This 207-nucleotide RNA was probed chemically with 2A3 and DMS. The DMS profile rests on 5,538 reads. The 2A3 profile rests on 6,902 reads.
RNA sequence: GGGAACGACUCGAGUAGAGUCGAAAACCACCCCGGGAGUCAGAACUAGUCCUUUCAAUCCUUUUGCGAGAAUCUCAAAGUCUUUAUUGCCCUUUCUUUCUGCCUUGGGGAGGGUGACCACCACCAGAAACAGGGCGACGUUCUCGUCUAGCUCGCGCUCUGUAAAGAUGUUCGCAUCUUUACAGAGAAAAGAAACAACAACAACAAC
Reactivity to 2A3 in 0.01 (KOAc 150mM, MgCl2 10mM, bicine 150mM(pH8.5), 24C), signal-to-noise 7, nucleotides 027 to 156: c010c000a030c000c030c010c010g020g030g010a040g070u120c050a030g040a090a070c040u070a040g070u070c030c000u060u160u140c090a130a120u120c020c010u090u160u150u140g030c030g010a030g030a090a080u040c040u030c180a150a140a030g090u040c060u080u270u130a200u110u190g020c000c000c000u050u120u110c020u010u100u010c030u080g080c020c020u090u130g010g000g020g010a090g040g010g020u070g030a040c000c020a040c040c000a020c000c010a020g050a020a050a020c060a030g010g000g010c000g000a020c030g040u090u000c030u020c020g050u000c030u040a030g020c020u010c040g030c000g010
Reactivity to DMS in 0.01 (KOAc 150mM, MgCl2 10mM, bicine 150mM(pH8.5), 24C), signal-to-noise 2, nucleotides 027 to 156: c010c030a170c020c040c000c050g030g060g020a130g030u000c060a060g000a090a100c060u000a140g000u010c020c030u000u000u010c080a110a140u020c040c020u000u010u010u000g050c040g020a160g010a090a080u010c060u000c060a070a100a150g000u000c040u020u000u000a050u010u000g020c000c010c020u000u000u000c040u010u010u000c030u010g010c060c020u000u000g030g010g020g010a110g010g000g030u000g000a160c030c040a090c060c030a060c060c030a030g020a080a060a060c060a050g000g030g030c010g010a050c080g030u010u000c040u000c030g030u000c040u000a190g000c000u010c010g040c050g030